[RMDB]
The record gives the reactivity of an RNA of 207 nucleotides to 2A3 and DMS. High DMS reactivity at an A or C suggests that its Watson-Crick edge is free. The DMS profile rests on 1,637 reads. The RNA was probed in 150 mM KOAc, 10 mM MgCl2 and 150 mM bicine (pH 8.5) at 24 C. It was measured as part of the RMDB library OK3TST.
RNA sequence: GGGAACGACUCGAGUAGAGUCGAAAAGAAGCACGGCUUGUGUGUGAUCCUUUUGGAUUGCACUGUAUAUCCUACGCUGUGCGAAGGUAGGACCAUUGUGGCGAGAGCCACUUACAGUACAGCUUAUUAUGACGCAUCGCUGUACGAACGAUGCGGAAUUACCCGGGCAUUUCGAUGCCCGGGUAAUAAAAGAAACAACAACAACAAC
Reactivity to 2A3 in 0.01 (KOAc 150mM, MgCl2 10mM, bicine 150mM(pH8.5), 24C), signal-to-noise 1, nucleotides 027 to 156: g120a080a000g010c000a010c070g050g020c130u140u120g040u040g000u000g030u030g220a000u010c000c020u020u280u160u300g000g000a000u000u020g000c000a000c010u000g080u050a200u030a010u090c020c000u080a010c100g010c000u000g000u080g030c000g000a010a000g050g040u040a030g000g050a010c020c020a030u030u300g040u010g010g000c010g000a030g010a010g030c000c000a000c000u000u070a010c000a020g030u020a000c020a000g010c000u090u000a010u140u050a100u190g120a030c020g000c060a010u000c050g000c020u040g060u160a110c020g020a040a000c010g010a000u010g000c010g000g000a040
Reactivity to DMS in 0.01 (KOAc 150mM, MgCl2 10mM, bicine 150mM(pH8.5), 24C), signal-to-noise 1, nucleotides 027 to 156: g010a160a110g000c000a040c030g010g020c030u000u040g000u000g050u000g000u000g010a000u000c000c000u000u000u030u010g020g010a020u000u020g030c030a020c000u010g110u020a210u000a130u000c140c000u010a180c140g040c010u010g050u000g040c020g000a040a150g000g000u000a170g050g010a290c020c080a140u010u010g010u040g020g030c010g040a300g010a280g010c010c000a020c010u000u000a020c040a180g020u000a060c020a150g000c010u010u000a130u000u000a300u000g000a050c090g000c000a010u000c040g040c000u000g010u010a130c180g010a060a010c010g030a040u040g010c010g000g010a180